RNA sequence: GGGAACGACUCGAGUAGAGUCGAAAAAAAAGAUAUGGAUGUGUAUCAGCUUGGAUUUAUAGGGUAUGUACAUCGGAAACGAUGUACUAAGCCCUAUUGUCAGCUGUAAGCACAUCCUAAGUCAAAAGGAUAUAGACUUCUUCGGAAGUCUAUAUCCAAAAGAAACAACAACAACAAC
Reactivity to DMS in 0.01 (KOAc 150mM, MgCl2 10mM, bicine 150mM(pH8.5), 24C), signal-to-noise 1, nucleotides 027 to 126: a030a020a140a060g010a060u010a300u010g010g000a000u000g000u000g010u000a300u020c000a010g030c000u000u010g030g010a000u020u030u000a010u000a000g020g010g010u000a300u000g000u040a000c000a000u000c000g000g000a170a040a130c000g070a000u000g000u000a000c010u010a020a080g000c000c000c000u010a000u000u000g000u000c010a030g040c050u000g000u000a030a260g000c010a000c010a000u000c000c000u000a020a060g000u000c030a110a040a150a130
Reactivity to 2A3 in 0.01 (KOAc 150mM, MgCl2 10mM, bicine 150mM(pH8.5), 24C), signal-to-noise 1, nucleotides 027 to 126: a000a000a000a000g080a000u110a050u090g010g000a010u010g000u020g000u000a030u140c010a020g010c020u200u260g190g000a120u300u300u060a020u040a020g000g000g000u030a070u130g030u000a020c000a000u000c000g040g000a020a050a060c020g000a000u000g050u000a010c000u010a050a010g040c000c000c020u050a000u000u000g000u000c000a000g040c020u000g000u040a120a070g050c000a000c010a000u000c000c000u020a080a010g070u010c020a000a000a120a240
An RNA of 177 nucleotides, treated with DMS and 2A3 and read out base by base. Reactivities are given for positions 27 through 126. Conditions: 150 mM KOAc, 10 mM MgCl2 and 150 mM bicine (pH 8.5), 24 C. In probing experiments dimethyl sulfate is read out at A N1 and C N3, which are open when not base-paired. For DMS, 963 sequencing reads were counted.